[RMDB]
RNA sequence: GGGAACGACUCGAGUAGAGUCGAAAAGCAGGGUUGAGAAGGCUGCGGGGGGCCCUGGGCUAGUACGGAGCCAUCCACUGUCCAGACCACUGUCCCUGUGCUCACAUGUGCUCAGCAAUGCUGGGACCUCAUUGGUCGGAUUCGUCCGACCAAUGAGAAAAGAAACAACAACAACAAC
Reactivity to 2A3 in 0.01 (KOAc 150mM, MgCl2 10mM, bicine 150mM(pH8.5), 24C), signal-to-noise 1, nucleotides 027 to 126: g000c010a010g000g020g070u020u080g080a030g040a240a100g050g000c000u000g080c050g040g000g040g020g000g020c020c030c040u000g000g030g000c000u120a010g030u000a050c050g000g000a020g020c070c030a060u040c000c000a020c020u010g020u030c010c000a020g060a020c010c030a060c150u040g030u050c000c000c010u030g000u010g020c070u070c010a110c020a120u200g070u160g250c000u010c020a000g000c050a120a300u210g000c030u020g010g010g060a080c000
Reactivity to DMS in 0.01 (KOAc 150mM, MgCl2 10mM, bicine 150mM(pH8.5), 24C), signal-to-noise 1, nucleotides 027 to 126: g030c040a040g020g010g020u010u010g020a070g000a230a180g040g010c020u000g000c060g000g000g000g000g000g000c090c070c050u000g020g000g010c050u020a080g000u000a070c170g000g010a020g010c130c110a030u000c020c000a030c010u000g020u000c000c010a100g000a200c110c030a030c230u000g000u000c040c000c000u000g050u000g040c010u010c080a120c200a090u000g030u030g050c000u000c010a040g000c010a170a070u000g010c010u010g020g000g000a050c070

Conditions: 150 mM KOAc, 10 mM MgCl2 and 150 mM bicine (pH 8.5), 24 C. An RNA of 177 nucleotides, treated with 2A3 and DMS and read out base by base. High DMS reactivity at an A or C suggests that its Watson-Crick edge is free. The DMS profile rests on 1,077 reads. The 2A3 profile rests on 902 reads. DMS adducts were read by reverse transcription with MarathonRT.